This 177-nucleotide RNA was probed chemically with 2A3 and DMS. For 2A3, 1,850 sequencing reads were counted. It was measured as part of the RMDB library OK2TST. Reactivities are given for positions 27 through 126. For DMS the reverse transcriptase was MarathonRT. Conditions: 150 mM KOAc, 10 mM MgCl2 and 150 mM bicine (pH 8.5), 24 C. The DMS profile rests on 847 reads. As a SHAPE reagent, 2A3 marks flexible, mostly unpaired nucleotides at the ribose 2'-OH.
[RMDB]
RNA sequence: GGGAACGACUCGAGUAGAGUCGAAAACUCACAGUUGCCGCCCGGCAUCACGUAUUACAUGCUCCGGCGCAACAUUGCUCCCAUGUGGGAGCAUGAGGCCAACCGGCGAGGAGGCCGCUGGGUGGUACCCACGCUUUUAGUUCGCUAAAAGCGUGGGAAAAGAAACAACAACAACAAC
Reactivity to 2A3 in 0.01 (KOAc 150mM, MgCl2 10mM, bicine 150mM(pH8.5), 24C), signal-to-noise 2, nucleotides 027 to 126: c010u050c000a080c050a070g150u140u070g040c010c010g000c010c010c000g000g030c020a030u130c050a020c060g130u130a170u220u220a100c050a080u130g070c010u030c050c020g000g000c010g010c010a000a010c020a020u040u250g000c010u010c020c010c060a140u300g250u300g120g010g000a000g010c000a000u040g000a030g040g000c030c010a040a020c030c010g010g000c030g030a090g100g010a060g070g000c000c020g000c010u020g000g000g010u010g030g000u040a060
Reactivity to DMS in 0.01 (KOAc 150mM, MgCl2 10mM, bicine 150mM(pH8.5), 24C), signal-to-noise 1, nucleotides 027 to 126: c020u020c070a210c250a100g010u010u000g010c020c000g040c020c000c050g010g010c000a110u020c140a110c180g000u000a080u000u030a140c080a100u010g020c130u020c010c080g010g030c040g000c010a020a100c000a070u010u010g000c000u000c000c030c010a300u020g030u020g000g030g020a040g040c000a000u000g000a060g030g000c010c010a080a090c000c010g000g000c010g000a100g000g000a220g010g000c110c230g020c010u010g030g000g020u010g010g000u000a030